[RMDB]
Notes
Chemical mapping of a 177-nucleotide RNA with 2A3 and DMS.

RNA sequence: GGGAACGACUCGAGUAGAGUCGAAAAUCGAUGGCGUUCGCGCCAUCGAAGAGCCGUACCGCGUAGCACGCGGAUAGGAGUGAAGAUAUCCAUGGCCAUGGAGGAGGCGUGCUUUCGAGCACGCCAAGCUGAUACUCUCAUUCGUGAGAGUAUCAGCAAAAGAAACAACAACAACAAC
Reactivity to 2A3 in 0.01 (KOAc 150mM, MgCl2 10mM, bicine 150mM(pH8.5), 24C), signal-to-noise 3, nucleotides 027 to 126: u030c000g000a000u010g000g030c010g040u040u060c270g000c000g000c100c010a000u000c000g000a000a000g020a010g050c020c030g040u100a070c000c020g010c010g040u050a060g100c230a040c130g000c040g010g010a010u090a050g020g020a030g050u140g110a090a050g040a160u150a050u120c000c020a000u050g130g000c060c050a040u060g070g000a050g060g100a040g000g020c020g000u010g000c010u130u080u070c220g060a010g000c000a000c030g010c000c010a000a020
Reactivity to DMS in 0.01 (KOAc 150mM, MgCl2 10mM, bicine 150mM(pH8.5), 24C), signal-to-noise 3, nucleotides 027 to 126: u010c010g010a020u010g010g010c000g040u010u010c220g030c020g010c020c010a010u000c010g000a010a050g000a110g010c000c030g010u000a190c010c000g010c030g020u010a180g020c070a300c030g010c010g010g010a100u020a030g020g000a100g010u000g000a070a060g000a090u010a090u010c020c010a030u000g010g020c040c100a110u000g010g000a060g020g000a130g020g000c000g000u000g000c000u000u020u010c170g010a020g000c000a000c000g000c000c010a010a040

Conditions: 150 mM KOAc, 10 mM MgCl2 and 150 mM bicine (pH 8.5), 24 C.